[RMDB]
RNA sequence: GGGAACGACUCGAGUAGAGUCGAAAAGUUUAUGCAAAGGCACUUCGCAAUGUGUGCUCAAACAUUGCUUAUUCAAACACGCUUCACAAUGUGCGACAAAGAAACAUUGUUAUAAGAGUUAAUGUUUACCACGCCUAAAGGUUCGCCUUUAGGCGAACGCUUUUCCGUAGUUCGCUACGGAAAAGCGAAAAGAAACAACAACAACAAC
Reactivity to 2A3 in 0.01 (KOAc 150mM, MgCl2 10mM, bicine 150mM(pH8.5), 24C), signal-to-noise 2, nucleotides 027 to 156: g060u000u210u040a230u160g000c060a170a040a000g100g050c000a030c000u070u070c000g020c060a030a000u060g040u030g010u000g080c120u120c100a080a100a000c000a020u000u000g020c010u090u080a160u150u080c120a000a050a040c030a060c090g000c000u010u000c010a000c000a010a010u000g000u040g010c030g020a050c140a150a160a050g050a020a030a000c010a010u000u010g020u050u140a160u030a130a090g050a000g020u050u050a070a010u050g010u040u010u000a070c000c010a010c000g000c000c010u010a020a000a000g050g090u010u050c230g230c080c000u000u010u000a000g010g000c000g000a000a000